[RMDB]
RNA sequence: GGGAACGACUCGAGUAGAGUCGAAAAUGCCACGCGAUAUCCGCAGAUCGGCAGCGUCCAGGUCCAGCUUGACAGAUGUCAUAAGACGUAUUAAAACGUCUUAUACUCACCACGUCAAGCGUGCGUGAUAUCCUUCCCGGUUCGCCGGGAAGGAUAUAAAAGAAACAACAACAACAAC
Reactivity to DMS in 0.01 (KOAc 150mM, MgCl2 10mM, bicine 150mM(pH8.5), 24C), signal-to-noise 3, nucleotides 027 to 126: u000g010c030c030a090c140g010c040g010a100u000a080u000c080c000g010c050a120g010a040u000c060g000g010c030a100g040c170g000u010c020c020a090g010g000u010c050c110a090g010c010u000u010g000a010c010a130g020a020u000g020u000c100a020u000a000a010g010a010c000g010u000a160u010u020a090a120a140a040c000g000u000c000u000u000a000u010a080c020u020c020a060c060c080a090c170g010u000c000a020a020g010c000g020u000g000c070g010u000g010
Reactivity to 2A3 in 0.01 (KOAc 150mM, MgCl2 10mM, bicine 150mM(pH8.5), 24C), signal-to-noise 2, nucleotides 027 to 126: u090g010c000c010a020c020g050c010g050a060u090a080u200c070c020g000c030a040g020a100u110c070g010g000c020a030g150c080g030u050c020c010a050g030g040u000c020c050a010g030c010u000u010g000a000c000a050g070a110u130g040u070c050a000u010a010a000g010a010c010g020u060a140u070u290a220a140a000a010c000g000u000c000u010u000a000u000a010c010u030c000a080c060c020a060c110g000u020c020a010a000g000c000g000u000g020c030g060u100g030